Overview: The record gives the reactivity of an RNA of 177 nucleotides to DMS and 2A3. The 2A3 profile rests on 967 reads. In probing experiments dimethyl sulfate is read out at A N1 and C N3, which are open when not base-paired. Conditions: 150 mM KOAc, 10 mM MgCl2 and 150 mM bicine (pH 8.5), 24 C.

RNA sequence: GGGAACGACUCGAGUAGAGUCGAAAAUUGCAAGCCUUCGGGCUUGCAAGGUCUCGGAAUGCGGAAUAUAUAAUCCUCCGCUUAAGGAUUAUACCGACUUAAGUGCCAGGCUGUUCGCAGCCUGGAAGCUAGUGAUGGACUUCGGUCCAUCACUAGCAAAAGAAACAACAACAACAAC
Reactivity to DMS in 0.01 (KOAc 150mM, MgCl2 10mM, bicine 150mM(pH8.5), 24C), signal-to-noise 1, nucleotides 027 to 126: u010u000g000c000a000a000g000c000c010u000u020c160g050g000g040c010u000u010g040c030a000a000g030g000u010c010u000c010g010g010a070a100u000g030c070g000g000a180a050u000a140u010a050u000a020a000u010c020c000u000c210c150g000c140u010u020a050a040g010g000a030u010u000a020u000a040c140c010g010a100c110u010u010a040a080g020u010g000c000c000a000g010g000c000u010g000u000u010c270g050c000a040g000c010c010u000g010g000a020a040
Reactivity to 2A3 in 0.01 (KOAc 150mM, MgCl2 10mM, bicine 150mM(pH8.5), 24C), signal-to-noise 1, nucleotides 027 to 126: u000u000g000c000a040a010g000c010c010u040u050c240g060g000g020c000u000u000g000c000a000a000g000g000u000c000u010c000g030g130a210a050u300g000c020g000g130a180a010u200a060u010a010u000a240a030u050c020c040u030c040c000g170c220u060u160a030a010g000g000a000u050u000a020u060a050c020c020g100a100c100u200u140a210a050g030u050g220c000c010a000g010g020c010u000g060u020u060c240g000c120a010g000c000c000u000g010g010a000a010